[RMDB]
Description: Chemical mapping of a 177-nucleotide RNA with DMS and 2A3. For 2A3, 1,865 sequencing reads were counted.
RNA sequence: GGGAACGACUCGAGUAGAGUCGAAAACUACAUAAAUUCGUUUAUGUAGCAUCGGGGACGCCCAGACUCCCCGUCAGACGGCUCUAGCCUUCCAAGCUCUGCACUCAACAGCUUUCGAGCUGUUGAAACAUUUUGGCUAUUUCGAUAGCCAAAAUGUAAAAGAAACAACAACAACAAC
Reactivity to DMS in 0.01 (KOAc 150mM, MgCl2 10mM, bicine 150mM(pH8.5), 24C), signal-to-noise 2, nucleotides 027 to 126: c010u000a010c010a020u000a010a040a060u010u000c180g020u000u000u000a000u000g000u000a000g010c070a100u010c040g000g010g000g010a060c120g000c040c040c050a180g000a120c180u000c000c000c000c020g010u010c070a080g000a080c070g010g010c030u010c040u010a080g000c020c000u010u000c010c040a050a100g000c050u010c060u000g000c210a110c130u010c000a010a010c000a000g010c000u000u000u010c180g010a000g030c010u000g000u000u000g010a040a150
Reactivity to 2A3 in 0.01 (KOAc 150mM, MgCl2 10mM, bicine 150mM(pH8.5), 24C), signal-to-noise 1, nucleotides 027 to 126: c000u010a000c010a010u010a000a000a060u050u050c120g030u040u010u010a010u000g000u010a010g040c030a070u130c010g000g010g010g010a030c080g110c030c090c000a060g040a150c000u020c000c000c020c000g000u000c010a030g000a070c000g020g010c030u040c050u140a040g030c000c000u060u040c030c010a080a000g010c020u030c030u060g060c030a060c030u010c000a000a010c000a000g000c000u050u060u200c190g070a020g010c000u000g010u020u000g000a010a010

Overview
The DMS profile rests on 1,581 reads. The reactions ran in a buffer of 150 mM KOAc, 10 mM MgCl2 and 150 mM bicine (pH 8.5), at 24 C.